[RMDB]
RNA sequence: GGGAACGACUCGAGUAGAGUCGAAAAAUUGAUAAACGGCACCUAUAAGGUGGUGCCGAACCAGCGUGACCUACCAACACGCAACGAGCACUCUGGUAUGACUGCAAACCUAUGGUAAACAAGAUAAACAAUCCCUAGAAUUCGUUCUAGGGAUUGUAAAAGAAACAACAACAACAAC
Reactivity to DMS in 0.01 (KOAc 150mM, MgCl2 10mM, bicine 150mM(pH8.5), 24C), signal-to-noise 3, nucleotides 027 to 126: a080u010u000g010a100u020a080a100a130c010g020g000c010a000c000c000u010a170u020a120a120g020g010u000g000g000u010g010c000c010g010a040a070c080c040a090g000c020g000u000g000a050c020c020u000a050c000c000a230a050c030a020c040g010c010a140a050c110g000a160g000c030a050c080u000c030u010g030g010u000a060u000g000a050c060u000g000c030a060a040a060c020c030u000a070u010g010g010u020a020a120a110c160a060a070g000a090u000a080a080
Reactivity to 2A3 in 0.01 (KOAc 150mM, MgCl2 10mM, bicine 150mM(pH8.5), 24C), signal-to-noise 1, nucleotides 027 to 126: a010u090u100g080a030u120a070a160a000c010g010g000c060a000c010c040u050a110u060a300a040g150g000u050g020g000u000g030c010c000g000a010a000c000c010a040g000c000g070u020g030a170c000c000u010a070c030c050a000a040c010a000c030g020c040a000a050c030g020a010g000c010a000c020u040c000u060g010g030u090a040u100g090a060c050u070g000c060a040a040a160c000c010u110a090u240g050g020u110a010a020a020c160a160a040g080a210u220a160a050
The record gives the reactivity of an RNA of 177 nucleotides to DMS and 2A3. The data come from the RNA Mapping Database (RMDB), library M2PK90. The RNA was probed in 150 mM KOAc, 10 mM MgCl2 and 150 mM bicine (pH 8.5) at 24 C. For DMS, 2,482 sequencing reads were counted.